[RMDB]
Overview: The record gives the reactivity of an RNA of 207 nucleotides to DMS and 2A3. Source: RMDB library OK3TST, as collected in RNAgym. For 2A3, 12,921 sequencing reads were counted. The reactions ran in a buffer of 150 mM KOAc, 10 mM MgCl2 and 150 mM bicine (pH 8.5), at 24 C.
RNA sequence: GGGAACGACUCGAGUAGAGUCGAAAAUCAUGUCCUUUGACAUUGAGUGCUACUCGUCAACUGGUGAGUUUCCAAACCCAAACACCACUCGGGACGUUGUGUUUCAGAUUGGCAUGACGACUCGCACGUUUGGCUCGGACGAACCCAUGGUGCGCAAGGUUAGUAUUAGUUUCGACUAAUACUAACCAAAAGAAACAACAACAACAAC
Reactivity to DMS in 0.01 (KOAc 150mM, MgCl2 10mM, bicine 150mM(pH8.5), 24C), signal-to-noise 4, nucleotides 027 to 156: u010c040a070u010g020u010c000c190u000u010u000g010a030c020a050u000u020g010a060g020u000g010c030u000a050c040u000c020g010u000c030a170a100c060u000g030g010u000g010a110g020u000u000u000c030c020a070a080a120c180c000c020a070a040a050c000a090c070c020a070c100u000c030g000g000g010a180c040g010u000u000g020u000g020u000u000u000c050a170g000a280u010u010g020g020c030a060u010g010a020c010g010a090c010u010c020g000c140a080c080g020u000u010u010g010g030c030u000c240g010g030a090c120g000a050a140c020c010c020a140u000g020g020u000g000c030g040c120a180a230
Reactivity to 2A3 in 0.01 (KOAc 150mM, MgCl2 10mM, bicine 150mM(pH8.5), 24C), signal-to-noise 9, nucleotides 027 to 156: u070c020a010u050g030u040c020c020u100u040u250g020a030c040a060u110u210g020a030g050u120g120c050u090a050c020u010c030g030u050c050a100a070c080u030g020g000u050g040a110g020u020u090u020c010c000a030a050a050c030c010c000a010a020a000c030a030c050c040a050c060u050c000g010g020g010a020c020g010u010u010g010u010g030u010u130u120c110a140g050a300u160u200g060g000c020a020u010g020a010c010g010a020c010u000c010g000c020a050c120g010u000u030u030g020g000c030u020c060g020g010a010c020g030a030a040c010c000c010a030u070g050g020u100g030c080g020c090a110a100